Overview: Structure probing data (DMS and 2A3) for a 177-nucleotide construct. For DMS the reverse transcriptase was MarathonRT. For 2A3 the reverse transcriptase was SuperScript II with manganese.

RNA sequence: GGGAACGACUCGAGUAGAGUCGAAAAGAAAGAAAGAAAAGGACGAGGAGCGCUGAAAGCCAGAGACAAGGCUCGUCCGUUCAAACGGCGCUCAAAAGAAAAAGAAAAAGAAAAAGAAAAGAAAGAAAUCAUUAUUUUACUUCGGUAAAAUAAUGAUAAAAGAAACAACAACAACAAC
Reactivity to DMS in 0.01 (KOAc 150mM, MgCl2 10mM, bicine 150mM(pH8.5), 24C), signal-to-noise 2, nucleotides 027 to 126: g000a080a090a120g010a090a090a070g020a070a030a100a190g000g040a020c060g020a120g000g000a020g000c040g010c000u000g030a060a110a040g010c040c000a140g000a170g000a120c160a090a100g000g010c010u020c010g020u030c010c020g000u020u010c140a080a090a110c140g020g000c050g000c020u010c020a060a020a100a120g020a100a060a020a060a100g000a050a040a050a050a060g020a020a040a070a050a020g000a090a030a050a080g000a050a080a090g020a120a070
Reactivity to 2A3 in 0.01 (KOAc 150mM, MgCl2 10mM, bicine 150mM(pH8.5), 24C), signal-to-noise 1, nucleotides 027 to 126: g070a020a040a020g120a010a120a010g050a020a210a000a020g030g000a010c000g020a040g050g020a020g020c010g020c010u030g010a040a000a000g000c010c000a050g040a020g030a100c090a150a070g000g000c040u020c020g000u010c000c000g000u080u000c060a000a000a120c040g020g020c000g000c020u020c010a020a060a000a000g030a000a080a000a000a000g150a080a110a010a010a020g130a010a100a060a050a000g030a010a060a000a000g040a000a110a010g010a020a280